[RMDB]
RNA sequence: GGGAACGACUCGAGUAGAGUCGAAAAGAGUUGGCUGAUAGCGACAUGAAAAGGACACGAACAGACACCGAAAGGAAAGCAGGUAGGGCAUGCAGACGCUUGUAGAAAGUUCGUUCAAAACUUGAAAUCUAUAGCAAUGGUUCGCCAUUGCUAUAGAAAAAGAAACAACAACAACAAC
Reactivity to 2A3 in 0.01 (KOAc 150mM, MgCl2 10mM, bicine 150mM(pH8.5), 24C), signal-to-noise 6, nucleotides 027 to 126: g100a010g020u080u060g050g020c020u030g030a090u060a060g040c030g070a030c060a070u140g080a070a050a020a020g040g000a020c020a010c100g010a070a010c010a020g050a020c010a030c030c030g050a100a030a040g060g020a050a010a010g030c040a000g000g040u110a060g050g060g000c060a030u130g010c010a000g020a040c040g000c040u010u010g010u020a020g080a020a020a010g010u030u020c030g030u030u030c060a040a050a050a060c020u050u040g030a070a040a030
Reactivity to DMS in 0.01 (KOAc 150mM, MgCl2 10mM, bicine 150mM(pH8.5), 24C), signal-to-noise 8, nucleotides 027 to 126: g010a100g010u000u010g000g010c040u000g000a110u020a060g020c060g010a080c080a070u010g000a050a060a060a100g010g010a060c170a050c020g010a040a040c040a060g040a130c050a210c030c020g000a070a090a170g010g000a040a060a070g000c040a030g000g010u010a070g020g000g000c030a050u000g010c090a080g010a090c080g010c020u000u010g020u010a190g000a070a050a060g000u010u000c030g010u010u010c090a050a060a080a080c060u000u010g000a080a080a090